[RMDB]
RNA sequence: GGGAACGACUCGAGUAGAGUCGAAAACUAUCGGUGCUCAGUGACAAGCCUCGCCCGGCCAGCAGGCUGCUAUUAUCAGCAUUAGUAUUACGAUCAGCACUGGUAUUGCGGAUACUGAGCGCGGUGAUAAAUUACCUAGUUUCGACUAGGUAAUUUAAAAAGAAACAACAACAACAAC
Reactivity to 2A3 in 0.01 (KOAc 150mM, MgCl2 10mM, bicine 150mM(pH8.5), 24C), signal-to-noise 7, nucleotides 027 to 126: c020u030a030u090c030g130g020u050g010c000u000c010a010g010u010g060a070c040a110a030g020c000c010u040c060g010c000c030c020g080g020c020c000a010g020c010a020g060g000c020u020g000c010u060a050u170u050a040u130c030a010g060c040a040u090u100a050g070u090a100u120u180a080c120g040a080u090c040a010g010c070a000c040u010g020g000u030a060u040u100g020c010g030g020a040u040a150c000u010g000a000g000c000g000c020g030g010u040g030a090
Reactivity to DMS in 0.01 (KOAc 150mM, MgCl2 10mM, bicine 150mM(pH8.5), 24C), signal-to-noise 9, nucleotides 027 to 126: c040u000a030u010c020g020g040u000g020c000u000c020a020g010u000g010a120c180a250a080g010c010c010u010c190g010c010c020c020g010g000c030c070a300g000c030a030g000g010c010u000g000c040u000a030u010u010a030u000c030a030g010c080a100u010u010a100g020u010a080u000u010a090c160g010a090u000c100a100g010c130a100c020u000g000g000u000a030u000u000g010c020g010g010a150u000a030c010u000g000a020g010c010g020c010g000g000u000g010a150